[RMDB]
RNA sequence: GGGAACGACUCGAGUAGAGUCGAAAAGCGUACUACCUGGUCGCCAAUGAUCAACAGCUUAUGAAGUCUCGUUCCCAAAUAGGAACGAGUCACAUAAGACAUGAUCAAAAAUGACCAGGUAUCGCAAAAGAUCUGAUCCGUUCGCGGAUCAGAUCAACAUAUAAUGCACGUUCGCGUGCAUUAUAUGAAAAGAAACAACAACAACAAC
Reactivity to DMS in 0.01 (KOAc 150mM, MgCl2 10mM, bicine 150mM(pH8.5), 24C), signal-to-noise 4, nucleotides 027 to 156: g030c020g040u000a070c060u000a010c000c000u000g010g010u000c000g050c070c060a100a300u010g000a030u000c010a030a110c060a240g000c000u000u000a000u000g010a090a210g020u000c020u000c000g020u010u000c000c000c020a030a160a190u000a050g010g010a000a030c010g020a010g020u000c020a300c010a010u000a010a020g010a060c050a300u010g010a020u000c000a010a040a140a110a090u000g010a010c000c000a010g010g000u000a000u000c020g020c030a050a060a130a120g010a010u000c000u000g000a010u000c000c000g020u000u010c250g020c000g020g040a010u000c000a000g000a000u000c000a030a130
Reactivity to 2A3 in 0.01 (KOAc 150mM, MgCl2 10mM, bicine 150mM(pH8.5), 24C), signal-to-noise 9, nucleotides 027 to 156: g000c000g060u110a090c030u010a010c040c000u000g000g010u010c000g010c020c010a030a080u010g000a000u000c010a020a110c050a130g050c000u020u000a010u030g100a300a060g030u000c000u000c000g000u000u030c020c000c030a150a270a210u290a070g000g000a000a000c000g000a000g000u020c000a020c000a020u000a000a000g130a120c040a130u060g000a010u000c000a000a000a000a000a030u020g000a000c000c000a000g000g000u010a000u010c000g000c000a010a030a020a060g000a000u000c000u000g000a000u000c020c000g020u060u090c280g020c010g080g000a000u000c000a000g000a000u000c000a000a000
The record gives the reactivity of an RNA of 207 nucleotides to DMS and 2A3.
The DMS profile rests on 12,387 reads.
The reactions ran in a buffer of 150 mM KOAc, 10 mM MgCl2 and 150 mM bicine (pH 8.5), at 24 C.
It was measured as part of the RMDB library RNAMAK.
For 2A3, 14,664 sequencing reads were counted.